[RMDB]
RNA sequence: GGGAACGACUCGAGUAGAGUCGAAAACAUUUAUCUCAUUUUUCAAGGAAAGAGACACUUCUAAGGAAUAAGGUUCCUGGGCUAAGUAAAUCUAGUUCUGUGGACUGUCUUUCUGCCACCAAGAUCAGAUUUAGCACUAAUUCGUUAGUGCUAAAUCAAAAGAAACAACAACAACAAC
Reactivity to 2A3 in 0.01 (KOAc 150mM, MgCl2 10mM, bicine 150mM(pH8.5), 24C), signal-to-noise 9, nucleotides 027 to 126: c040a030u150u200u150a140u040c020u010c050a130u090u100u040u110u140c100a110a090g080g020a070a040a020g060a010g030a020c020a030c090u090u070c040u120a050a090g090g030a070a070u110a160a090g070g000u020u020c000c000u000g010g000g000c010u040a110a050g030u060a170a170a100u080c020u020a010g020u060u010c010u040g090u170g020g020a030c010u010g060u040c000u000u060u010c010u040g040c020c010a050c010c020a060a020g020a080u080c030a010
Reactivity to DMS in 0.01 (KOAc 150mM, MgCl2 10mM, bicine 150mM(pH8.5), 24C), signal-to-noise 7, nucleotides 027 to 126: c120a060u040u030u030a060u020c020u040c030a150u020u010u010u010u020c110a080a180g000g010a040a040a050g010a040g010a060c170a050c210u020u010c040u040a070a080g000g000a030a030u010a120a100g010g000u000u000c000c010u000g000g000g010c020u010a020a030g010u010a060a060a110u030c090u000a040g010u010u000c010u000g000u040g010g000a040c060u000g010u010c070u010u000u000c020u000g010c050c020a090c060c050a050a080g000a050u010c140a110
This 177-nucleotide RNA was probed chemically with 2A3 and DMS.
The reactions ran in a buffer of 150 mM KOAc, 10 mM MgCl2 and 150 mM bicine (pH 8.5), at 24 C.
2A3 adducts were read by reverse transcription with SuperScript II with manganese.
For DMS the reverse transcriptase was MarathonRT.
The 2A3 profile rests on 18,443 reads.
High DMS reactivity at an A or C suggests that its Watson-Crick edge is free.